[RMDB]
RNA sequence: GGGAACGACUCGAGUAGAGUCGAAAAAGAAUCUCCUUCGGGAGAUUCUGAACCACUAAGCUGAUUGCGGAUGACGACGAGGCAGCUCGUCUCGAGCAACCACCGAGAACAGGUUCGCCUGUUCUAAAACUCACUAGAAUUUCGAUUCUAGUGAGUUAAAAGAAACAACAACAACAAC
Reactivity to 2A3 in 0.01 (KOAc 150mM, MgCl2 10mM, bicine 150mM(pH8.5), 24C), signal-to-noise 5, nucleotides 027 to 126: a000g000a000a000u000c000u010c000c020u010u070c190g090g000g000a000g000a000u000u010c000u000g000a000a020c000c010a030c130u120a070a060g050c080u030g060a090u050u040g020c030g060g120a110u230g020a040c120g000a000c000g000a020g060g080c070a120g120c050u000c010g010u000c010u000c020g040a040g000c000a010a020c010c020a030c020c070g140a020g000a040a000c000a010g000g030u040u070c130g050c050c000u010g010u000u010c000u010a000a020
Reactivity to DMS in 0.01 (KOAc 150mM, MgCl2 10mM, bicine 150mM(pH8.5), 24C), signal-to-noise 9, nucleotides 027 to 126: a010g000a020a000u000c000u000c000c000u000u010c190g020g010g010a010g010a000u000u000c000u000g000a090a220c000c000a110c210u020a090a120g020c150u010g000a040u000u000g010c010g010g010a150u000g000a030c180g010a020c010g010a040g000g010c300a110g010c020u000c010g010u000c000u000c010g000a250g000c010a020a030c020c010a020c120c090g000a040g000a020a010c000a010g000g000u000u010c240g010c010c000u000g000u000u000c000u000a030a070